Record summary:
This 177-nucleotide RNA was probed chemically with 2A3 and DMS. For 2A3, 3,001 sequencing reads were counted. Reactivities are rounded to 0.1 and cut off at 0 and 3. The reactions ran in a buffer of 150 mM KOAc, 10 mM MgCl2 and 150 mM bicine (pH 8.5), at 24 C. Reactivities are given for positions 27 through 126.

[RMDB]
RNA sequence: GGGAACGACUCGAGUAGAGUCGAAAAACAUGAAGGUCAAUAAUCAUGUAGUUUAUAAUCAUCAGGAAGCUGCGAAGUAUGAGAACCAUACGGAAAAUGCUUUGUUAUUGUAUAUGGCCUGUACACACCUACUAAGGUGGUUCGCCACCUUAGUAGGAAAAGAAACAACAACAACAAC
Reactivity to 2A3 in 0.01 (KOAc 150mM, MgCl2 10mM, bicine 150mM(pH8.5), 24C), signal-to-noise 3, nucleotides 027 to 126: a000c030a020u070g060a050a010g030g030u040c020a040a120u130a170a080u120c030a030u060g060u100a050g010u000u140u040a150u050a060a150u070c090a010u020c020a030g210g020a020a000g020c020u050g030c070g060a050a010g000u000a000u030g080a100g020a150a030c020c000a000u000a020c030g030g050a020a120a010a060u080g000c000u030u020u090g090u070u070a120u060u090g050u000a040u000a040u150g000g020c000c000u000g030u080a010c080a000c010a020
Reactivity to DMS in 0.01 (KOAc 150mM, MgCl2 10mM, bicine 150mM(pH8.5), 24C), signal-to-noise 5, nucleotides 027 to 126: a090c010a030u000g000a080a040g020g020u000c060a050a160u000a090a100u000c020a020u000g000u000a110g020u010u010u010a050u010a100a070u010c100a030u000c080a080g000g010a040a030g030c020u010g000c120g020a250a160g010u010a010u000g000a170g000a150a300c060c000a010u000a000c030g000g010a090a070a070a080u000g000c020u000u000u000g010u010u000a050u000u010g010u000a060u000a080u000g010g020c000c020u000g000u010a040c110a090c300a120